Conditions: 150 mM KOAc, 10 mM MgCl2 and 150 mM bicine (pH 8.5), 24 C. The record gives the reactivity of an RNA of 177 nucleotides to 2A3.

[RMDB]
RNA sequence: GGGAACGACUCGAGUAGAGUCGAAAACAAACAAACAAUGGGCGGCGAAAUGUUACAGUAAGAAAAAGAAAAGAAACGCCAACCCAAAACUUACUGUAGUAACAAAACAAAAACAAAACAAACAAAAGCGAUAAUCCAUAUUCGUAUGGAUUAUCGCAAAAGAAACAACAACAACAAC
Reactivity to 2A3 in 0.01 (KOAc 150mM, MgCl2 10mM, bicine 150mM(pH8.5), 24C), signal-to-noise 1, nucleotides 027 to 126: c040a000a050a000c020a000a080a030c000a010a040u160g110g000g000c030g020g050c130g160a080a040a000u200g040u160u050a010c010a000g000u020a000a000g020a040a090a000a000a000g230a000a150a000a010g170a050a050a000c020g070c020c030a000a080c000c000c020a030a170a000a000c000u010u000a000c000u060g000u020a010g010u070a100a000c010a000a140a000a000c090a110a210a060a020a000c130a010a120a000a000c070a000a160a000c060a080a020a050a000
Background: For 2A3 the reverse transcriptase was SuperScript II with manganese.